[RMDB]
RNA sequence: GGGAACGACUCGAGUAGAGUCGAAAACGGUAUUGGUCAAGGCUAUACCGACAGCGCACCUUCAAAAGGGCGCUUAAUCCCCGACCAAGCGCCGAAAUAUGAAUAGACACCGCUGGGCUGGUAGGGCAAAACAUGGCGAUCUUCGGAUCGCCAUGAAGAUAGUGUAGACGUUCGCGUCUACACUAUCAAAAGAAACAACAACAACAAC
Reactivity to 2A3 in 0.01 (KOAc 150mM, MgCl2 10mM, bicine 150mM(pH8.5), 24C), signal-to-noise 3, nucleotides 027 to 156: c020g000g020u010a020u040u160g020g000u080c070a120a070g120g000c000u010a020u030a070c000c000g030a020c030a030g000c000g000c060a300c100c010u050u130c060a080a070a060a020g010g000g000c000g000c000u010u000a010a000u000c020c020c000c000g000a010c010c010a030a020g040c080g050c070c010g100a080a070a030u220a070u100g080a100a080u070a110g050a020c050a020c060c030g030c070u080g000g050g000c030u030g050g000u020a070g030g020g000c020a000a040a030a090c000a010u000g010g000c000g000a000u000c000u020u020c110g080g010a000u000c000g000c000c000a000u000g000a000a000
Reactivity to DMS in 0.01 (KOAc 150mM, MgCl2 10mM, bicine 150mM(pH8.5), 24C), signal-to-noise 2, nucleotides 027 to 156: c010g000g010u000a080u000u000g010g020u000c050a110a140g050g010c050u000a080u020a080c020c030g040a140c100a060g000c060g000c000a060c010c000u000u020c160a100a120a190a150g020g000g030c020g010c010u000u000a020a100u000c080c010c020c000g010a040c050c030a070a070g030c040g060c040c030g020a060a120a170u000a170u010g010a060a150u010a130g010a080c050a020c050c050g020c030u000g030g010g010c030u020g010g010u000a040g010g020g020c050a030a080a100a140c010a060u000g000g000c000g000a010u000c000u000u000c300g030g000a010u000c010g070c000c010a000u020g020a030a120
An RNA of 207 nucleotides, treated with 2A3 and DMS and read out base by base. 2A3 adducts were read by reverse transcription with SuperScript II with manganese. Source: RMDB library M2RFOK, as collected in RNAgym. Conditions: 150 mM KOAc, 10 mM MgCl2 and 150 mM bicine (pH 8.5), 24 C. The DMS profile rests on 3,003 reads.